[RMDB]
RNA sequence: GGGAACGACUCGAGUAGAGUCGAAAAGGCGAAUGUUAGUAUAUUUGUGUUCAUUCGCCGGCUAAGCAACACAAAUAUACUAAGCUUAGCCACGACGGUGGACAUGCGAAAGCAUGUCCAUCGUCGAGCUGCUUGUAGGCUUCGGCCUACAAGCAGCAAAAGAAACAACAACAACAAC
Reactivity to 2A3 in 0.01 (KOAc 150mM, MgCl2 10mM, bicine 150mM(pH8.5), 24C), signal-to-noise 1, nucleotides 027 to 126: g000g030c000g020a090a040u100g000u060u010a040g040u060a130u030a070u070u030u070g030u000g000u000u040c050a050u120u140c070g070c070c000g000g030c010u010a080a030g050c030a040a000c060a010c000a000a060a010u060a000u030a040c020u040a020a010g050c010u070u070a000g000c000c000a020c000g000a000c000g000g020u020g000g010a000c000a010u010g000c010g060a160a000a030g010c000a020u000g000u000c000c000a000u000c000g000u020c000g010a020
Conditions: 150 mM KOAc, 10 mM MgCl2 and 150 mM bicine (pH 8.5), 24 C. The record gives the reactivity of an RNA of 177 nucleotides to 2A3. The data come from the RNA Mapping Database (RMDB), library OK1LIB. Reactivities are given for positions 27 through 126. For 2A3 the reverse transcriptase was SuperScript II with manganese. The 2A3 profile rests on 752 reads.